Chemical mapping of a 177-nucleotide RNA with DMS and 2A3. Source: RMDB library TTRINS, as collected in RNAgym. Values are in units of 0.01, from 0 to 300, in steps of 10. For 2A3, 7,747 sequencing reads were counted. Values cover nucleotides 27 to 126. The reactions ran in a buffer of 150 mM KOAc, 10 mM MgCl2 and 150 mM bicine (pH 8.5), at 24 C.

RNA sequence: GGGAACGACUCGAGUAGAGUCGAAAAGAUAUGGAUUGAGAACUACUACCUGGACUCCGUUGAAAUUAUCAUCGGAAACGAUGAUAAUGGAGGAGUCUUGUACAGGAUAGUAGCUCAAUCCUAAGUCGCUAUAGUGGUAGUUCGCUACCACUAUAGCAAAAGAAACAACAACAACAAC
Reactivity to DMS in 0.01 (KOAc 150mM, MgCl2 10mM, bicine 150mM(pH8.5), 24C), signal-to-noise 2, nucleotides 027 to 126: g000a040u000a150u010g010g000a010u000u000g010a020g000a110a140c010u000a000c000u000a050c010c000u000g010g010a020c000u000c000c010g010u000u020g000a170a110a010u000u000a000u000c010a010u000c010g000g000a080a040a150c000g020a010u010g010a030u000a010a000u000g000g010a070g030g000a020g010u000c000u000u000g020u020a240c240a080g000g020a180u000a020g010u000a000g000c000u000c010a020a010u000c000c000u000a010a090g010u000c030
Reactivity to 2A3 in 0.01 (KOAc 150mM, MgCl2 10mM, bicine 150mM(pH8.5), 24C), signal-to-noise 3, nucleotides 027 to 126: g050a040u070a030u160g010g000a010u010u020g010a020g060a300a210c000u030a000c000u030a050c020c010u040g050g000a000c000u000c010c020g260u300u040g010a010a010a000u010u000a000u000c000a000u000c010g010g010a060a000a000c010g010a010u000g000a000u010a000a020u000g000g010a010g000g000a000g040u000c000u000u050g000u090a070c030a010g080g060a290u070a100g000u010a010g000c000u000c000a000a000u000c000c000u000a000a000g010u020c070